Overview: An RNA of 207 nucleotides, treated with 2A3 and DMS and read out base by base. For 2A3, 3,969 sequencing reads were counted. Values cover nucleotides 27 to 156.

[RMDB]
RNA sequence: GGGAACGACUCGAGUAGAGUCGAAAAUCAAUUUGUGAUGAACUCACAAACACAACAAAAUCUACUAUUUGCUUAAUAAAUCGUAGUCAGGCGAAUAUAUUAGUUUCAAAUAUUUGCUUUGUCGCUUAGGAACUAUGCCUUAACUAAAGUAGCUAAGGGUAUCUUUGUAGUUCGCUACAAAGAUACCAAAAGAAACAACAACAACAAC
Reactivity to 2A3 in 0.01 (KOAc 150mM, MgCl2 10mM, bicine 150mM(pH8.5), 24C), signal-to-noise 6, nucleotides 027 to 156: u060c020a010a070u010u020u020g010u010g010a080u110g040a080a030c020u000c010a010c010a020a060a010c110a020c030a120a110c040a020a090a030a100u030c000u020a030c010u020a060u050u030u050g020c010u150u130a070a030u120a130a150a020u050c030g000u000a010g030u020c030a010g010g000c010g010a040a010u070a010u010a050u140u160a040g040u020u060u070c020a040a050a030u050a060u050u060u040g000c000u130u080u150g110u170c060g070c100u050u080a030g010g040a030a040c020u020a060u160g020c010c000u070u080a060a050c060u090a120a050a080g060u060a020g040c030u050a020a040g110
Reactivity to DMS in 0.01 (KOAc 150mM, MgCl2 10mM, bicine 150mM(pH8.5), 24C), signal-to-noise 2, nucleotides 027 to 156: u010c050a060a040u000u010u020g010u000g020a070u000g000a190a300c190u000c010a000c030a010a060a020c050a220c080a130a080c050a030a040a030a090u000c010u010a060c050u000a080u000u000u000g000c040u010u020a100a090u000a070a050a150u030c100g020u000a100g000u000c070a030g010g040c000g010a050a010u000a050u010a070u000u000a090g010u010u000u000c060a060a090a120u000a030u000u000u000g010c030u000u000u000g020u000c030g000c020u000u000a050g010g010a000a040c030u000a030u010g000c050c010u000u010a030a100c120u000a080a060a110g010u000a010g010c030u000a060a060g010

DMS (dimethyl sulfate) methylates the pairing face of unpaired adenines and cytosines. The reactions ran in a buffer of 150 mM KOAc, 10 mM MgCl2 and 150 mM bicine (pH 8.5), at 24 C. High 2A3 reactivity points to a flexible backbone, as in loops and unpaired stretches. For DMS, 2,495 sequencing reads were counted.